Structure probing data (DMS and 2A3) for a 207-nucleotide construct.
The RNA was probed in 150 mM KOAc, 10 mM MgCl2 and 150 mM bicine (pH 8.5) at 24 C.
The DMS profile rests on 4,722 reads.
Values cover nucleotides 27 to 156.
DMS adducts were read by reverse transcription with MarathonRT.
RNA sequence: GGGAACGACUCGAGUAGAGUCGAAAAGAAGUUGGAGCGAAGAGCAAGAGUAGGAGAAAGAAAGUGUCGUAAAGGUCUUUGGAGGAGUCGUUGGAGGUAUGGUGUUGUUCGAAAUCUCGUUUGAGUUUUUAUUUUGAGAUUACUCUACUUUUAUAUACAUACCUCAGCUAUUCGUAGCUGAGGUAUGAAAAGAAACAACAACAACAAC
Reactivity to DMS in 0.01 (KOAc 150mM, MgCl2 10mM, bicine 150mM(pH8.5), 24C), signal-to-noise 2, nucleotides 027 to 156: g010a110a110g030u000u000g020g010a080g010c080g030a070a090g020a060g030c030a070a110g000a060g020u000a050g040g020a100g000a110a050a100g010a080a050a090g010u000g030u000c040g020u000a080a110a120g030g000u000c030u000u000u000g020g010a120g030g010a060g000u010c030g050u000u010g020g000a060g010g000u000a120u020g000g000u000g020u000u000g030u020u010c030g020a050a060a060u000c030u000c040g040u010u000u000g010a090g020u000u000u000u000u010a040u020u050u010u000g000a130g010a060u000u000a050c040u010c020u000a070c030u000u000u010u000a110u010a180u000a220
Reactivity to 2A3 in 0.01 (KOAc 150mM, MgCl2 10mM, bicine 150mM(pH8.5), 24C), signal-to-noise 5, nucleotides 027 to 156: g060a030a010g020u040u060g020g020a020g020c070g040a060a010g020a030g040c040a060a020g010a010g020u060a040g000g050a050g040a020a090a010g050a030a080a040g040u060g030u050c040g030u100a050a070a080g030g010u030c030u070u140u110g060g010a020g020g000a020g010u040c050g020u050u060g010g020a020g010g010u080a060u100g010g030u030g020u020u060g010u020u030c020g020a050a030a050u040c040u010c030g040u020u080u190g050a060g020u060u090u090u100u100a140u090u130u080u100g020a030g000a020u040u080a050c030u050c010u070a060c000u060u060u130u110a180u150a020u220a130